[RMDB]
RNA sequence: GGGAACGACUCGAGUAGAGUCGAAAAUCCUAGUCGAUCAGUCGAAGUCUCCUCUGAUCGAAGAGAGUCUCGAGACUAGGAAGGAGAGAAGAGAGGAGAAGAGAGGAAGAGGACUAGCUUCUCUCAGCUGAGAUCUCGAAGAGGAUCCUUCUCCUUCCGUCAUAUAGUCAUUCGUGACUAUAUGACGAAAAGAAACAACAACAACAAC
Reactivity to 2A3 in 0.01 (KOAc 150mM, MgCl2 10mM, bicine 150mM(pH8.5), 24C), signal-to-noise 7, nucleotides 027 to 156: u010c000c000u020a030g070u020c020g030a070u040c030a020g090u030c040g050a150a040g090u020c040u020c040c010u020c010u030g070a110u070c050g020a070a010g060a000g010a010g050u030c040u080c140g110a080g010a050c030u030a030g040g020a020a020g020g010a020g000a000g000a140a010g030a000g010a010g010g020a010g010a040a020g060a020g000a010g100g050a080a080g050a060g100g060a020c020u030a010g050c010u070u040c020u000c000u000c020a040g020c050u080g050a050g010a190u020c040u030c080g070a120a050g060a070g050g020a010u030c020c000u030u020c010u010c000c000u020u010c020
Reactivity to DMS in 0.01 (KOAc 150mM, MgCl2 10mM, bicine 150mM(pH8.5), 24C), signal-to-noise 4, nucleotides 027 to 156: u000c010c000u000a040g010u010c010g030a050u000c020a060g020u000c050g000a090a230g020u010c120u000c000c020u000c010u000g000a110u000c120g020a050a050g000a090g000a120g030u000c020u000c020g030a190g010a080c040u000a110g000g020a050a080g030g020a120g010a140g010a090a110g000a060g000a080g000g020a080g010a070a090g000a150g000a070g000g000a070a120g010a110g010g010a100c040u000a110g020c040u000u000c010u000c000u000c010a100g020c070u010g000a100g010a050u000c010u000c030g010a110a130g000a180g000g000a090u000c020c020u010u000c030u000c010c010u000u000c000
About this RNA: An RNA of 207 nucleotides, treated with 2A3 and DMS and read out base by base. For DMS the reverse transcriptase was MarathonRT. The RNA was probed in 150 mM KOAc, 10 mM MgCl2 and 150 mM bicine (pH 8.5) at 24 C. For DMS, 9,404 sequencing reads were counted.